[RMDB]
RNA sequence: GGGAACGACUCGAGUAGAGUCGAAAAGCCGUAAACGCAUCCGGCGAAUAAGAUGCAUGAGCGAAAGCUCUAAGAUAAUUGGCCGUUUGGUAGGGGCCGUAGACCCUACUUAUUAAUGCUCGAGAAGUGUGGAGCGAUCAUCACGCAAGACUAACAAAGGAUAUUAUCACUUCGGUGAUAAUAUCCUAAAAGAAACAACAACAACAAC
Reactivity to DMS in 0.01 (KOAc 150mM, MgCl2 10mM, bicine 150mM(pH8.5), 24C), signal-to-noise 2, nucleotides 027 to 156: g020c040c020g030u020a070a180a150c070g000c030a040u000c040c000g020g000c060g000a170a170u010a080a090g010a090u000g010c080a170u000g010a040g000c010g010a140a150a280g000c000u000c000u000a030a080g010a140u010a070a160u000u000g030g060c050c010g000u000u010u010g010g010u000a040g010g040g020g020c000c220g000u000a060g000a040c000c000c010u010a060c020u010u010a090u000u000a040a070u000g030c000u000c060g010a130g020a080a100g000u000g030u010g010g000a120g020c030g000a100u000c080a080u010c040a060c030g000c030a020a050g000a300c030u030a060a050c100a090a160
Reactivity to 2A3 in 0.01 (KOAc 150mM, MgCl2 10mM, bicine 150mM(pH8.5), 24C), signal-to-noise 2, nucleotides 027 to 156: g000c000c000g000u070a000a190a200c030g000c020a000u050c000c010g030g000c020g010a070a120u160a080a020g050a000u060g010c050a060u050g000a000g000c050g030a080a040a000g000c000u030c010u010a060a050g020a150u170a080a070u070u150g010g040c020c030g080u070u090u070g000g000u000a020g000g000g000g000c020c020g020u020a030g090a100c000c000c000u000a000c000u000u020a030u040u090a020a040u080g010c020u000c070g050a070g000a130a070g050u070g000u040g050g060a020g010c040g000a070u020c000a000u050c030a000c010g040c030a060a040g200a220c170u090a110a030c080a100a210

The data come from the RNA Mapping Database (RMDB), library OK3TST. Chemical mapping of a 207-nucleotide RNA with DMS and 2A3. The DMS profile rests on 2,180 reads. For DMS the reverse transcriptase was MarathonRT. Conditions: 150 mM KOAc, 10 mM MgCl2 and 150 mM bicine (pH 8.5), 24 C.